[RMDB]
RNA sequence: GGGAACGACUCGAGUAGAGUCGAAAACUGAGGAUUAGAAAUGUUAGUAAACGAUAAUUUAGAUGUAGAAACCUUGGAAUGCCGCCUCAGUUCCAAGCUCUUUCGUGGCACUGUAAACAGUCCUAUUCCUUAUCCAUGCAUUCGUGCAUGGAUAAGGAAAAGAAACAACAACAACAAC
Reactivity to 2A3 in 0.01 (KOAc 150mM, MgCl2 10mM, bicine 150mM(pH8.5), 24C), signal-to-noise 2, nucleotides 027 to 126: c000u110g030a000g030g120a220u140u090a100g120a070a130a100u100g110u240u000a120g010u120a050a120a040c040g050a190u090a180a110u040u020u170a110g000a160u180g050u060a130g170a070a060a000c060c000u020u000g010g000a120a000u040g010c010c020g090c000c000u000c000a000g030u030u000c020c000a000a000g010c000u000c010u000u130u000c000g000u010g000g000c140a040c000u010g000u100a140a000a000c000a040g030u040c000c000u040a110u020u020